Structure probing data (DMS and 2A3) for a 177-nucleotide construct.
For DMS, 1,039 sequencing reads were counted.
Conditions: 150 mM KOAc, 10 mM MgCl2 and 150 mM bicine (pH 8.5), 24 C.
Reactivities are given for positions 27 through 126.
It was measured as part of the RMDB library TTRDEL.
RNA sequence: GGGAACGACUCGAGUAGAGUCGAAAAGAUAUGGAGCAUGGGAGUCUAUCAGUCGGAAACGACUGUAAGGACGAGGAUCAUGUCUCCUAAGUCAAAACUUGCAUUUGCGUUCGCGCAAAUGCAAGAACAUACUUGCCCACUUCGGUGGGCAAGUAUGAAAAGAAACAACAACAACAAC
Reactivity to DMS in 0.01 (KOAc 150mM, MgCl2 10mM, bicine 150mM(pH8.5), 24C), signal-to-noise 2, nucleotides 027 to 126: g010a060u010a300u000g010g000a030g040c010a000u000g010g000g000a000g040u000c000u000a300u030c000a020g000u010c000g000g010a070a130a190c010g040a010c000u000g000u030a030a150g010g010a000c000g010a110g020g000a070u030c000a010u000g000u020c000u000c000c000u000a030a110g000u000c090a060a090a050a200c040u000u010g000c000a030u000u000u010g000c010g020u010u000c290g060c040g020c020a000a000a000u000g000c010a000a000g010a060a090
Reactivity to 2A3 in 0.01 (KOAc 150mM, MgCl2 10mM, bicine 150mM(pH8.5), 24C), signal-to-noise 1, nucleotides 027 to 126: g000a000u050a030u090g000g000a010g020c000a000u020g010g000g020a010g030u010c010u030a120u130c020a010g020u020c020g040g000a050a070a070c010g020a010c020u010g010u080a120a140g070g000a010c030g040a080g000g010a010u010c010a000u000g170u120c000u030c000c000u040a110a050g040u050c030a000a040a090a250c000u030u020g000c000a010u020u000u010g000c030g050u010u100c300g000c030g000c200a000a000a000u010g000c000a000a000g020a000a000